[RMDB]
Annotation
Structure probing data (2A3 and DMS) for a 207-nucleotide construct. Values cover nucleotides 27 to 156.
RNA sequence: GGGAACGACUCGAGUAGAGUCGAAAAUGAGGAGCCACGCAACACGCCAUGACUCUCUUGUAUUAUUCUAAGUAAAAUGAUUAUCAUGGAUCCACUGAUCAACAGUGUUGAUGAACAUGCAGGUUUCCCAUAUCGAUCCAACCUGAGGGCACCAGAGUGCCCUUCACAAUUUCGAUUGUGAAGGGCAAAAAGAAACAACAACAACAAC
Reactivity to 2A3 in 0.01 (KOAc 150mM, MgCl2 10mM, bicine 150mM(pH8.5), 24C), signal-to-noise 3, nucleotides 027 to 156: u170g000a060g010g020a010g000c010c000a060c050g000c030a020a040c030a030c110g030c000c010a020u020g020a020c000u020c020u000c050u040u080g060u070a120u180u060a140u130u150c090u090a080a080g020u090a090a130a070a060u120g010a020u040u130a050u140c020a000u000g000g040a000u050c030c020a020c030u040g010a150u100c050a060a180c020a050g030u020g010u080u080g020a060u030g000a020a040c040a090u070g010c060a010g010g040u050u050u060c010c000c010a040u050a030u070c080g010a030u030c010c010a000a030c010c020u040g030a030g000g000g020c010a010c040c000a010g000a020g080
Reactivity to DMS in 0.01 (KOAc 150mM, MgCl2 10mM, bicine 150mM(pH8.5), 24C), signal-to-noise 3, nucleotides 027 to 156: u020g010a060g010g020a110g010c020c000a030c070g010c020a090a070c060a050c050g000c040c010a080u010g020a060c000u000c050u010c030u020u010g000u000a080u000u000a070u000u000c090u000a090a100g040u000a070a050a050a080u000g000a070u000u010a090u000c020a060u000g010g010a110u000c020c040a080c080u010g000a120u000c110a080a120c020a090g000u000g020u000u000g010a080u000g010a050a120c050a080u010g030c010a080g000g010u000u000u000c010c000c010a110u000a100u010c030g010a100u000c020c020a060a060c030c020u000g010a070g000g010g000c040a070c010c020a090g000a170g030
The 2A3 profile rests on 2,006 reads.